[RMDB]
RNA sequence: GGGAACGACUCGAGUAGAGUCGAAAAAGCCCCGGUGCUGAGAACACCGAGGCUGCCGAUCAAGAAGAAGACACGAAGGAGUCUACCAAAUGGCCGAUGCAGUGAUGCAGAUCAGCAAGAUCGCCGCCGAGACGAUCCACGUCCCGAUCAUCGGGACUGCUAUUAAUCGAUUCGUCGAUUAAUAGCAAAAAGAAACAACAACAACAAC
Reactivity to DMS in 0.01 (KOAc 150mM, MgCl2 10mM, bicine 150mM(pH8.5), 24C), signal-to-noise 1, nucleotides 027 to 156: a010g000c000c000c020c020g180g030u000g020c010u000g020a140g010a170a100c000a010c000c000g000a000g000g070c000u010g010c030c050g010a120u010c080a200a090g010a130a060g010a140a070g000a100c060a030c070g010a080a120g020g030a110g000u010c070u040a130c070c050a030a050a080u010g050g040c000c060g000a130u000g010c030a080g000u010g010a150u000g000c000a050g010a090u000c050a060g010c040a100a050g010a060u000c000g000c050c060g030c120c100g000a300g000a020c010g000a020u000c000c030a030c100g010u010c000c000c030g020a170u010c160a170u010c010g000g030g010a010c070
Reactivity to 2A3 in 0.01 (KOAc 150mM, MgCl2 10mM, bicine 150mM(pH8.5), 24C), signal-to-noise 2, nucleotides 027 to 156: a000g020c010c000c000c000g000g010u020g000c040u060g070a050g010a220a010c000a000c000c000g000a010g000g010c000u010g020c000c030g040a080u080c070a070a020g050a060a010g030a030a020g040a120c010a010c140g080a070a050g040g020a030g010u000c050u060a090c070c050a070a060a120u110g030g000c020c030g030a020u020g010c060a000g030u020g090a050u030g000c040a000g030a150u070c030a010g060c020a050a060g010a050u020c010g010c040c020g050c040c020g060a060g010a010c020g000a000u000c050c000a060c030g000u000c000c000c000g050a110u170c030a050u160c060g010g000g000a010c000
Structure probing data (DMS and 2A3) for a 207-nucleotide construct. Conditions: 150 mM KOAc, 10 mM MgCl2 and 150 mM bicine (pH 8.5), 24 C. For DMS the reverse transcriptase was MarathonRT. 2A3 adducts were read by reverse transcription with SuperScript II with manganese. Reactivities are given for positions 27 through 156. For DMS, 1,918 sequencing reads were counted. Reactivities are rounded to 0.1 and cut off at 0 and 3.